[RMDB]
An RNA of 177 nucleotides, treated with 2A3 and DMS and read out base by base. DMS adducts were read by reverse transcription with MarathonRT. The reactions ran in a buffer of 150 mM KOAc, 10 mM MgCl2 and 150 mM bicine (pH 8.5), at 24 C. The 2A3 profile rests on 1,967 reads. For 2A3 the reverse transcriptase was SuperScript II with manganese.
RNA sequence: GGGAACGACUCGAGUAGAGUCGAAAAUGGUUCCGCUGAAGUCCGGCGAGGGCCGUUACGUGGCGCCGGAGAAGGUGCUUGACGAACUAGAAGGCGAAGGCCGGGUGGUGUUCCGCUACCAUGACAAUAUUCUGAUUCGAUUCGUCGAAUCAGAAUAAAAAGAAACAACAACAACAAC
Reactivity to 2A3 in 0.01 (KOAc 150mM, MgCl2 10mM, bicine 150mM(pH8.5), 24C), signal-to-noise 2, nucleotides 027 to 126: u050g000g010u040u070c010c020g000c050u040g070a150a060g060u070c030c000g010g030c010g050a300g040g060g020c010c000g050u090u100a040c040g040u030g050g000c000g030c020c000g050g060a210g070a060a050g000g000u000g000c000u050u090g110a030c010g030a100a000c010u050a120g070a190a090g130g020c070g070a090a040g060g000c020c000g000g020g000u010g000g030u040g010u030u000c010c020g030c020u040a050c010c020a040u040g020a070c020a050a090
Reactivity to DMS in 0.01 (KOAc 150mM, MgCl2 10mM, bicine 150mM(pH8.5), 24C), signal-to-noise 3, nucleotides 027 to 126: u020g000g000u000u000c040c040g010c080u000g000a140a170g010u000c100c010g020g030c020g010a140g010g000g040c000c020g000u000u020a060c080g010u020g020g000c010g020c020c010g000g010a120g000a120a130g020g020u000g020c030u000u000g010a100c030g000a090a060c090u010a140g020a140a170g010g000c000g010a110a130g000g020c000c020g010g000g030u000g000g020u010g000u010u000c050c010g010c030u010a050c030c010a050u010g000a080c170a080a150